[RMDB]
RNA sequence: GGGAACGACUCGAGUAGAGUCGAAAAACCGCUAGGCACGGUUCACGUAAUCCAGGGCGGAUAUCUGAACGAAUUUAUCGUCAAUCCGCUGGAUACUGACGAAGACUUGACCAUCCGUGUUGGUAGCGAGCCGGAAAACGCGCUUUUCCACCUGCGGCAGACCUAAGCCAUUCGUGGCUUAGGUCUGAAAAGAAACAACAACAACAAC
Reactivity to 2A3 in 0.01 (KOAc 150mM, MgCl2 10mM, bicine 150mM(pH8.5), 24C), signal-to-noise 1, nucleotides 027 to 156: a000c020c010g000c070u110a050g020g050c040a020c140g000g000u010u030c060a030c060g020u030a080a190u020c030c000a050g100g060g080c030g000g000a000u010a080u000c150u090g110a120a070c040g000a100a070u140u230u210a170u300c000g060u010c020a040a080u020c000c000g090c130u020g000g000a000u020a020c040u050g040a030c050g020a110a010g080a100c090u060u110g020a040c050c040a050u080c010c020g020u120g150u100u050g090g010u020a020g030c010g050a000g030c030c000g070g010a020a040a000a030c150g030c040g030c080u080u070u050u000c000c020a030c000c000u040g000c010g030g000